[RMDB]
RNA sequence: GGGAACGACUCGAGUAGAGUCGAAAAGGGAGAGCCGAGCAGAGGCAUAGCGAACUGCGCACGGAGAAGCCUUGAGGGAAUGCCGUAGGACCCGGGUUCGAUUCCCGGCAGCUCCACCGAAGGGCCAACGCUCCUAAUAGUUCGCUAUUAGGAGCGUAAAAGAAACAACAACAACAAC
Reactivity to DMS in 0.01 (KOAc 150mM, MgCl2 10mM, bicine 150mM(pH8.5), 24C), signal-to-noise 5, nucleotides 027 to 126: g000g010g000a050g000a070g010c020c040g010a090g020c090a050g010a100g010g000c070a080u010a060g000c040g020a110a050c020u000g010c090g010c100a110c150g000g000a050g010a120a140g010c010c000u000u030g010a290g000g000g010a060a110u020g010c020c040g010u010a150g020g000a080c110c010c020g010g000g040u000u010c180g010a270u030u020c020c000c000g000g000c100a060g000c060u000c050c060a120c060c030g010a170a070g000g000g020c060c090a090
Reactivity to 2A3 in 0.01 (KOAc 150mM, MgCl2 10mM, bicine 150mM(pH8.5), 24C), signal-to-noise 3, nucleotides 027 to 126: g020g020g010a110g000a000g040c020c040g020a010g020c050a020g040a060g060g010c050a050u070a030g050c030g030a070a030c030u070g020c070g020c030a030c070g010g020a060g020a080a000g010c010c030u050u040g030a080g020g010g020a060a100u090g080c010c030g060u060a080g010g040a040c010c000c000g020g010g000u040u090c040g020a030u070u080c000c000c000g010g010c010a030g010c030u040c030c020a050c010c000g030a020a030g030g010g000c010c010a040

An RNA of 177 nucleotides, treated with DMS and 2A3 and read out base by base.
It was measured as part of the RMDB library OK1LIB.
The DMS profile rests on 8,433 reads.
DMS adducts were read by reverse transcription with MarathonRT.
For 2A3, 4,207 sequencing reads were counted.
For 2A3 the reverse transcriptase was SuperScript II with manganese.